The record gives the reactivity of an RNA of 177 nucleotides to DMS and 2A3. For 2A3 the reverse transcriptase was SuperScript II with manganese.
RNA sequence: GGGAACGACUCGAGUAGAGUCGAAAAGAUACGCCCUCGGCCUCCACCGUGUUGAUCUGCCCACAAGGCGGCUUGACGAGAUUGCGACUGGAACGAAGUUGUCCUGAGGGACGGGGAAGCGUUUACGAAUGGGUAGAGGAUUCGUCCUCUACCCAUUAAAAGAAACAACAACAACAAC
Reactivity to DMS in 0.01 (KOAc 150mM, MgCl2 10mM, bicine 150mM(pH8.5), 24C), signal-to-noise 8, nucleotides 027 to 126: g020a110u030a030c060g000c000c010c000u000c010g010g020c030c020u010c020c050a090c150c090g000u020g000u000u000g010a040u010c020u010g010c000c010c020a120c300a130a300g000g010c010g010g000c080u010u000g000a020c000g000a090g010a110u020u020g010c050g000a090c060u000g000g000a090a120c160g010a080a080g010u010u010g000u010c040c050u010g000a090g000g010g000a040c020g010g000g000g000a090a090g010c040g000u000u010u000a080c100g000
Reactivity to 2A3 in 0.01 (KOAc 150mM, MgCl2 10mM, bicine 150mM(pH8.5), 24C), signal-to-noise 6, nucleotides 027 to 126: g080a010u080a060c010g020c020c000c000u000c000g020g010c000c030u050c020c010a090c060c040g060u040g080u100u010g050a080u000c020u040g030c000c000c020a100c030a040a010g010g010c020g010g010c000u020u040g050a010c040g020a020g060a200u110u210g040c060g020a030c040u050g050g050a080a050c050g040a100a090g040u170u130g060u070c010c010u020g030a090g020g020g030a030c010g000g010g000g000a060a080g010c000g020u020u030u080a080c050g030
The reactions ran in a buffer of 150 mM KOAc, 10 mM MgCl2 and 150 mM bicine (pH 8.5), at 24 C. High 2A3 reactivity points to a flexible backbone, as in loops and unpaired stretches. It was measured as part of the RMDB libraries RFM100 and RFMREP. Values cover nucleotides 27 to 126.